[RMDB]
RNA sequence: GGGAACGACUCGAGUAGAGUCGAAAAUCUAGAAGAGCUUAAAACAGGAAUCAGCGAUUUGAGCAUUUCGCGACCUAAGCAAAGACUCUCUUGGGGAAUUCCGGUUCCUGGUAAUUCACAACAAACUAUUUAUGUAUGGUUAGAUGCUUUAAUAAAACCAUCGAUACGAUUUCGAUCGUAUCGAUGGAAAAGAAACAACAACAACAAC
Reactivity to 2A3 in 0.01 (KOAc 150mM, MgCl2 10mM, bicine 150mM(pH8.5), 24C), signal-to-noise 2, nucleotides 027 to 156: u070c030u080a050g060a190a020g030a160g000c080u130u090a060a130a090a150c020a070g060g070a200a160u140c060a080g020c000g010a030u000u040u240g140a080g000c080a050u000u010u030c030g000c010g040a050c000c030u060a020a000g030c040a170a000a000g000a010c000u000c000u000c020u020u000g020g000g010g040a090a050u100u120c000c020g030g010u030u050c000c000u010g030g000u090a150a090u050u150c050a050c030a020a110c020a020a210a090c050u070a170u290u260u110a080u130g120u010a080u120g040g010u010u010a050g020a190u040g000c000u060u110u240a070a030u190a090a110a020a030
This 207-nucleotide RNA was probed chemically with 2A3. For 2A3 the reverse transcriptase was SuperScript II with manganese. The RNA was probed in 150 mM KOAc, 10 mM MgCl2 and 150 mM bicine (pH 8.5) at 24 C.